Structure probing data (2A3 and DMS) for a 207-nucleotide construct.
RNA sequence: GGGAACGACUCGAGUAGAGUCGAAAAACGCGGAGUACGCUCCGCGACAACACUUCUUUCGACCCGCUAACCGAGACCUAUGGGUCGUUAAAUUACGUCUAUAUCUUACUCACAUAACAUCGCACAAAAAACGUGGUUCGGUUCGCCGAACCACGAACAAUUCCAAAAUGUUCGCAUUUUGGAAUUGAAAAGAAACAACAACAACAAC
Reactivity to 2A3 in 0.01 (KOAc 150mM, MgCl2 10mM, bicine 150mM(pH8.5), 24C), signal-to-noise 6, nucleotides 027 to 156: a000c010g000c000g010g000a000g010u030a030c150g020c050u000c000c000g020c000g030a010c010a050a030c020a020c060u130u140c030u070u170u080c010g000a010c020c000c010g030c100u100a080a060c060c050g100a040g070a100c010c030u050a090u240g000g000g000u010c000g020u010u030a030a050a030u120u080a030c060g030u020c060u050a060u030a040u130c050u090u120a090c050u050c060a060c020a120u170a170a040c020a100u120c080g050c120a040c080a060a070a030a030a060a020c060g000u000g000g000u000u010c010g000g040u020u050c150g030c030c010g000a000a010c000c000a000c000g000a000a000
Reactivity to DMS in 0.01 (KOAc 150mM, MgCl2 10mM, bicine 150mM(pH8.5), 24C), signal-to-noise 1, nucleotides 027 to 156: a150c000g000c000g000g000a010g020u000a110c210g030c000u000c000c000g050c040g000a060c040a060a130c100a080c110u010u010c040u000u000u010c010g000a070c030c000c010g000c100u000a080a100c050c060g030a120g000a060c050c020u000a140u030g020g000g010u000c010g010u020u000a020a040a100u000u010a060c060g000u000c010u000a070u000a040u000c100u000u030a050c050u000c010a090c030a080u000a110a100c030a040u010c030g010c050a080c050a010a050a110a040a090a100c010g030u010g000g040u000u040c020g000g030u000u000c240g020c030c000g000a020a000c000c010a010c000g030a030a070